[RMDB]
RNA sequence: GGGAACGACUCGAGUAGAGUCGAAAACUCCAGCCUACACUUUUACAACAGUGAAACCUGGCGCAGCAUUUAGUGUGUUAGCAUGCUAUAAUGGUCGUCCGACUGGUACAUUCACUGUUGUAAUGCGCCAUAAGUAAUGGUUCGCCAUUACUUAUGGAAAAGAAACAACAACAACAAC
Reactivity to DMS in 0.01 (KOAc 150mM, MgCl2 10mM, bicine 150mM(pH8.5), 24C), signal-to-noise 4, nucleotides 027 to 126: c070u000c020c040a090g010c050c040u010a130c110a100c140u000u000u000u000a010c000a000a020c010a010g020u000g000a020a050a050c030c000u000g000g010c020g020c180a070g020c000a000u000u000u000a010g010u010g040u000g010u010u010a140g020c020a000u000g010c000u000a010u030a010a010u000g000g000u000c020g000u020c100c060g010a070c120u010g000g000u010a090c200a300u000u000c010a020c010u000g000u000u000g000u000a000a010u000g010c210g000
Reactivity to 2A3 in 0.01 (KOAc 150mM, MgCl2 10mM, bicine 150mM(pH8.5), 24C), signal-to-noise 8, nucleotides 027 to 126: c020u020c010c020a030g020c020c040u170a080c080a080c080u050u070u020u020a000c000a010a010c000a000g000u000g000a020a020a040c000c010u020g010g000c010g000c050a040g040c000a010u000u010u010a010g000u010g010u010g040u070u060a090g170c010a010u020g000c000u030a030u060a250a020u020g140g070u080c010g030u030c030c020g060a090c110u060g000g010u070a060c030a090u000u020c000a000c000u000g000u010u000g000u000a000a000u010g000c050g040